[RMDB]
RNA sequence: GGGAACGACUCGAGUAGAGUCGAAAAAAUAAUCUUCAGGGCAGGGUGAAAUUCCCGAUCGGCGGUAAAGUCCGCGAGCCGAACGAAAAAGGUUUGGCAGGAACCGGUGAGAUUCCGGUACCGAAAGCAAAGCCUCAACACUUCGGUGUUGAGGCAAGUGUAGUAGGUGAUUCGUCACCUACUACACAAAAGAAACAACAACAACAAC
Reactivity to 2A3 in 0.01 (KOAc 150mM, MgCl2 10mM, bicine 150mM(pH8.5), 24C), signal-to-noise 1, nucleotides 027 to 156: a000a000u100a040a030u030c070u170u120c090a100g040g050g080c020a020g040g020g000u030g010a050a020a080u050u020c010c020c020g010a110u150c020g000g020c020g010g010u000a000a000a000g000u000c010c000g000c020g000a000g020c010c000g010a000a000c000g080a020a000a120a070a090g100g040u000u000u010g010g000c010a010g000g030a000a000c000c000g020g010u010g000a010g000a010u000u000c000c000g000g000u000a000c000c010g060a020a000a000g030c030a040a010a000g000c010c000u000c000a000a000c000a000c000u020u110c200g010g000u000g000u000u010g000a000g010g020c010a000a000
Reactivity to DMS in 0.01 (KOAc 150mM, MgCl2 10mM, bicine 150mM(pH8.5), 24C), signal-to-noise 1, nucleotides 027 to 156: a130a140u010a100a070u000c050u000u000c060a040g030g050g000c040a090g000g040g000u000g000a060a100a240u010u010c000c010c040g010a260u030c020g020g000c020g000g010u000a100a110a060g050u000c000c000g020c030g000a240g050c010c000g000a030a090c010g010a070a090a130a150a200g030g010u000u000u000g020g010c000a090g020g010a030a050c000c000g000g020u000g000a300g010a300u000u000c010c020g000g000u000a010c000c040g000a120a030a150g020c160a030a060a140g020c000c010u000c000a010a010c000a020c000u000u000c280g060g010u020g010u000u000g010a030g010g000c010a000a000

Source: RMDB library M2RFPK, as collected in RNAgym. Structure probing data (2A3 and DMS) for a 207-nucleotide construct. DMS adducts were read by reverse transcription with MarathonRT. The DMS profile rests on 2,188 reads. Reactivities are given for positions 27 through 156. The RNA was probed in 150 mM KOAc, 10 mM MgCl2 and 150 mM bicine (pH 8.5) at 24 C. The 2A3 profile rests on 1,270 reads. Reactivities are rounded to 0.1 and cut off at 0 and 3.